This 177-nucleotide RNA was probed chemically with 2A3 and DMS. It was measured as part of the RMDB library RFM100.
[RMDB]
RNA sequence: GGGAACGACUCGAGUAGAGUCGAAAAACGGCAGCAUACGUGCUGCCGAGCGUGUGGGAAAGGUCCAGCCUCAUAUGUCCUGUGAUCCUGAGGGGGAGAUAUGUGGUCAGACCUGUCCCACAGGCAAUCGUGAUGAACUCUUCGGAGUUCAUCACGAAAAAGAAACAACAACAACAAC
Reactivity to 2A3 in 0.01 (KOAc 150mM, MgCl2 10mM, bicine 150mM(pH8.5), 24C), signal-to-noise 4, nucleotides 027 to 126: a010c010g000g000c010a010g000c020a000u020a080c230g110u020g030c000u000g000c000c000g010a000g000c030g060u000g000u000g000g000g000a040a040a000g000g000u000c020c010a000g020c000c000u020c000a000u010a000u020g240u040c010c000u140g090u140g200a240u200c010c130u160g100a260g050g120g000g000g010a010g000a000u000a000u000g020u020g000g000u080c010a010g000a000c000c000u010g030u010c000c000c000a000c000a000g020g000c010a010a110
Reactivity to DMS in 0.01 (KOAc 150mM, MgCl2 10mM, bicine 150mM(pH8.5), 24C), signal-to-noise 1, nucleotides 027 to 126: a040c030g040g000c030a010g000c000a040u000a130c180g030u000g000c000u020g000c010c000g000a000g000c030g000u000g010u000g000g000g020a000a010a000g010g020u010c000c020a300g040c000c010u010c000a030u000a000u000g000u000c020c000u000g020u020g000a130u010c220c110u000g010a130g010g030g040g000g010a000g000a010u020a000u000g000u000g000g060u000c070a300g010a020c010c000u030g030u000c020c000c020a000c000a010g000g030c050a090a060